[RMDB]
RNA sequence: GGGAACGACUCGAGUAGAGUCGAAAAUAUCCUCGUUUCGACGAGGAUAACAGAAAAGUCAUGCCAAAUAAAACGCUGACAGGCAUGAGAAAAGUCAGCGAAACAUACGGGUCUUCGGACCCGUAAAGCUCAGAAUAUGUUUCGACAUAUUCUGAGCAAAAGAAACAACAACAACAAC
Reactivity to 2A3 in 0.01 (KOAc 150mM, MgCl2 10mM, bicine 150mM(pH8.5), 24C), signal-to-noise 2, nucleotides 027 to 126: u050a000u000c000c000u010c000g000u040u050u070c130g090a010c000g010a000g010g020a000u000a010a010c000a000g190a030a180a000a000g050u040c020a010u040g000c010c000a080a300a020u180a030a120a060a030c110g010c010u000g010a000c010a010g010g030c020a010u030g010a020g070a000a180a000a010g010u000c000a000g010c010g030a040a070a000c020a000u080a030c000g000g000g000u000c000u030u070c190g130g000a000c000c010c000g000u000a000a000a000
Reactivity to DMS in 0.01 (KOAc 150mM, MgCl2 10mM, bicine 150mM(pH8.5), 24C), signal-to-noise 2, nucleotides 027 to 126: u000a020u000c000c030u000c000g020u000u010u020c160g030a020c010g020a050g000g000a020u000a020a070c120a150g020a090a060a110a140g000u000c030a010u000g000c000c000a130a080a170u010a040a020a080a140c120g030c000u000g000a010c010a070g000g000c010a000u000g000a020g000a050a090a080a130g000u000c000a010g000c030g050a190a100a070c140a120u000a000c000g000g020g020u000c000u000u020c150g030g000a010c000c000c000g000u000a000a050a050